[RMDB]
An RNA of 207 nucleotides, treated with 2A3 and DMS and read out base by base.
The reactions ran in a buffer of 150 mM KOAc, 10 mM MgCl2 and 150 mM bicine (pH 8.5), at 24 C.
It was measured as part of the RMDB library OK3TST.
For 2A3 the reverse transcriptase was SuperScript II with manganese.
The 2A3 profile rests on 13,127 reads.
DMS adducts were read by reverse transcription with MarathonRT.
RNA sequence: GGGAACGACUCGAGUAGAGUCGAAAACACCUCGUUAGCCCACAGAUAACAGCAAGUGGUGGAGAGGCAGCAGUGGACCCUGGCAGUGUGACGGAAGCCAGAGCCAUCAUCGAGACAAUGCACUUCUGUCCCGAAAUAAAUCUAGCACUUGAGGGCACGUAUUAUUAUCAUUCGUGAUAAUAAUACGAAAAGAAACAACAACAACAAC
Reactivity to 2A3 in 0.01 (KOAc 150mM, MgCl2 10mM, bicine 150mM(pH8.5), 24C), signal-to-noise 9, nucleotides 027 to 156: c080a050c000c010u050c040g060u060u130a040g010c020c040c010a050c030a050g170a120u180a160a060c030a060g090c030a040a040g020u030g040g120u030g030g040a050g000a020g020g000c010a010g000c020a010g010u060g030g050a110c040c000c010u010g000g000c020a080g040u050g040u080g300a090c110g080g050a070a010g000c000c010a010g010a010g050c040c010a080u110c030a040u070c070g050a030g010a090c080a090a100u150g020c030a030c020u030u030c010u030g050u050c010c020c020g070a070a060a020u180a020a070a020u040c030u030a020g080c010a010c020u010u030g020a100g010g010g000c010a010
Reactivity to DMS in 0.01 (KOAc 150mM, MgCl2 10mM, bicine 150mM(pH8.5), 24C), signal-to-noise 4, nucleotides 027 to 156: c040a110c030c020u000c050g010u000u000a100g080c000c000c010a180c040a120g010a180u000a130a190c070a120g010c070a070a070g030u000g000g020u010g020g010a160g010a070g020g020c050a080g000c050a100g000u000g010g010a040c000c000c020u000g010g000c010a110g040u020g020u000g010a200c060g020g030a110a200g000c050c030a040g010a060g000c000c000a140u010c060a100u000c040g000a150g010a070c060a050a080u000g000c050a070c050u000u010c050u000g010u000c010c010c020g000a050a070a120u010a040a080a150u000c040u000a080g000c020a050c040u000u000g010a080g030g030g010c010a160